[RMDB]
RNA sequence: GGGAACGACUCGAGUAGAGUCGAAAAUCGAUGGCGUUCGCGCCAUCGAAGAGCCGUACCGCGUAGCACGCGGAUAGGAGUGAAGAUAUCCAAGGCCAUGCAGGAGGCGUGCUUUCGAGCACGCCAACGUUGUCAUUCAGUUCGCUGAAUGACAACGAAAAGAAACAACAACAACAAC
Reactivity to DMS in 0.01 (KOAc 150mM, MgCl2 10mM, bicine 150mM(pH8.5), 24C), signal-to-noise 3, nucleotides 027 to 126: u000c010g020a030u010g000g040c000g030u000u010c170g040c020g010c000c010a000u010c010g000a010a070g000a120g000c010c020g020u000a210c030c000g000c020g010u000a110g010c050a300c030g030c190g010g000a100u010a030g000g000a090g020u010g000a110a100g000a130u020a050u000c020c030a090a260g010g000c010c070a040u000g000c040a090g020g020a150g000g010c010g010u000g020c000u000u000u000c170g000a030g010c010a000c010g000c000c010a000a030
Reactivity to 2A3 in 0.01 (KOAc 150mM, MgCl2 10mM, bicine 150mM(pH8.5), 24C), signal-to-noise 3, nucleotides 027 to 126: u050c010g000a000u010g010g020c050g020u040u100c300g000c000g000c040c000a000u000c000g000a000a000g000a010g030c010c010g000u060a060c040c000g000c010g020u040a030g100c150a030c130g000c040g020g000a020u100a040g000g010a020g010u070g140a120a070g060a150u100a040u080c000c010a030a050g020g000c000c050a050u120g070c050a080g080g070a050g030g020c000g000u000g010c010u100u090u130c220g050a010g000c000a000c000g000c000c010a000a000